[RMDB]
The record gives the reactivity of an RNA of 177 nucleotides to DMS and 2A3. The RNA was probed in 150 mM KOAc, 10 mM MgCl2 and 150 mM bicine (pH 8.5) at 24 C.
RNA sequence: GGGAACGACUCGAGUAGAGUCGAAAAGAUAUGGACGCAAGCAACAGCUACCGACUCGGAAACGAGUCGUAGACAUGCUUGGUCCUAAGUCAAAACCAUGGGAAAUCGUUCGCGAUUUCCCAUGGAAGGAGUAUAGAUGGUUCGCCAUCUAUACUCCAAAAGAAACAACAACAACAAC
Reactivity to DMS in 0.01 (KOAc 150mM, MgCl2 10mM, bicine 150mM(pH8.5), 24C), signal-to-noise 5, nucleotides 027 to 126: g000a020u000a250u000g000g010a010c000g010c010a010a000g010c000a030a080c300a170g010c010u000a010c110c040g020a010c010u000c000g000g000a050a040a100c000g000a000g020u010c000g010u000a000g000a100c110a170u000g000c000u000u000g010g000u000c000c000u000a010a070g010u010c030a090a080a120a170c000c000a010u000g000g000g000a000a010a000u010c000g020u000u010c240g030c010g010a010u000u000u000c000c000c000a000u000g000g000a020a030
Reactivity to 2A3 in 0.01 (KOAc 150mM, MgCl2 10mM, bicine 150mM(pH8.5), 24C), signal-to-noise 5, nucleotides 027 to 126: g020a010u040a030u080g000g000a030c060g020c300a000a010g000c010a020a150c070a260g070c020u020a020c050c250g000a000c000u000c000g020g000a040a030a020c010g000a000g000u000c000g010u000a000g020a090c040a070u050g000c000u010u000g000g000u000c000c000u010a040a010g020u010c020a000a020a090a190c010c000a000u010g000g020g020a010a000a000u020c020g020u100u080c300g020c000g150a000u000u000u000c000c000c000a000u000g000g000a010a040
For 2A3 the reverse transcriptase was SuperScript II with manganese. It was measured as part of the RMDB library TTRDEL.